[RMDB]
RNA sequence: GGGAACGACUCGAGUAGAGUCGAAAAGAAGAGAAUAAGUUUGUUAGUGGCGUGUCCGUCCGCAGCUGGCAAGCCAAACCGCAUACAAAGCGGAAUAAGGGACGGCUAAGACGCGAAGAAGACGCGACGAGUAUAGCCUGUUCGCAGGCUAUACUCGAAAAGAAACAACAACAACAAC
Reactivity to 2A3 in 0.01 (KOAc 150mM, MgCl2 10mM, bicine 150mM(pH8.5), 24C), signal-to-noise 2, nucleotides 027 to 126: g100a020a010g090a040g010a010a120u210a240a010g030u000u040u050g060u000u290a270g000u080g180g000c090g000u250g070u000c040c090g050u000c050c000g020c070a010g010c000u010g010g000c040a200a090g030c000c010a030a100a010c000c000g010c000a000u170a250c070a110a050a020g000c020g000g080a000a020u130a000a020g060g000g010a000c000g000g000c000u040a050a020g020a000c020g030c030g060a050a100g050a010a000g010a000c020g000c020g020a010
Overview: Chemical mapping of a 177-nucleotide RNA with 2A3.